[RMDB]
RNA sequence: GGGAACGACUCGAGUAGAGUCGAAAACCGUAGGAACUUUUGACGCUUUCGGGGUAGCGUUGAAACGUCGUUCGAAAGAGCGACGUGGAGCUACAAGUGAGCGAUAAGUUCCUAAACGGAAAACAUGGCCCAUCUGAUUCGUCAGAUGGGCCAUGAACGUGAAUCAUAGUUUCGACUAUGAUUCACGAAAAGAAACAACAACAACAAC
Reactivity to 2A3 in 0.01 (KOAc 150mM, MgCl2 10mM, bicine 150mM(pH8.5), 24C), signal-to-noise 4, nucleotides 027 to 156: c010c000g010u020a020g000g000a000a000c000u050u080u150u240g190a140c070g010c020u040u050u040c100g110g070g110g020u000a000g000c030g090u090u040g010a010a010a000c000g000u000c000g000u000u000c010g020a080a080a070g000a000g000c000g000a010c000g000u000g000g000a010g010c000u000a000c000a010a040g040u040g020a000g000c010g020a020u010a030a000g000u010u000c010c000u000a010a000a000c010g010g000a050a050a000a050c010a000u020g000g000c000c000c000a000u000c000u000g010a020u030u060c130g050u020c110a000g000a010u010g000g000g000c000c000a000u000g000a000a000
Reactivity to DMS in 0.01 (KOAc 150mM, MgCl2 10mM, bicine 150mM(pH8.5), 24C), signal-to-noise 2, nucleotides 027 to 156: c000c000g020u000a030g010g020a020a010c000u000u000u000u000g030a260c050g020c010u010u010u000c020g010g020g000g040u000a000g000c010g050u000u000g010a140a230a010c000g000u010c010g040u000u000c000g030a220a170a270g020a010g020c000g000a000c000g000u000g010g030a230g000c000u000a010c010a140a200g010u010g010a000g020c000g020a130u000a020a030g020u000u000c000c000u000a030a030a110c050g010g000a100a060a080a120c010a010u000g000g000c000c010c010a020u000c010u010g030a090u000u000c300g000u010c000a010g010a000u000g020g000g030c000c010a000u000g010a040a130
Chemical mapping of a 207-nucleotide RNA with 2A3 and DMS. The 2A3 profile rests on 8,237 reads. In probing experiments dimethyl sulfate is read out at A N1 and C N3, which are open when not base-paired. The reactions ran in a buffer of 150 mM KOAc, 10 mM MgCl2 and 150 mM bicine (pH 8.5), at 24 C. Reactivities are given for positions 27 through 156. For DMS, 5,307 sequencing reads were counted.